[RMDB]
RNA sequence: GGGAACGACUCGAGUAGAGUCGAAAAUUUAAUCCCAACAAAGGGCCAAGAGGGACGGCAACUUGGCCCAAGCCCAAAGAGCGAGACUCUAAAGGGAUGAGUCGUUCCCAACUCGCUGACAAUAUAACUUUUUGGUAUGUUUCGACAUACCAAAAAGAAAAGAAACAACAACAACAAC
Reactivity to DMS in 0.01 (KOAc 150mM, MgCl2 10mM, bicine 150mM(pH8.5), 24C), signal-to-noise 1, nucleotides 027 to 126: u040u030u000a090a190u000c010c000c000a140a130c140a040a090a170g000g020g010c000c000a000a010g030a190g010g000g000a010c050g050g010c070a180a080c000u000u010g000g000c000c000c010a040a010g080c010c000c120a070a240a110g000a030g000c030g000a160g010a140c000u000c010u010a000a110a040g000g040g000a130u000g000a010g020u000c000g020u000u000c000c000c000a020a000c070u000c030g000c050u000g000a080c180a160a020u000a090u010a050a130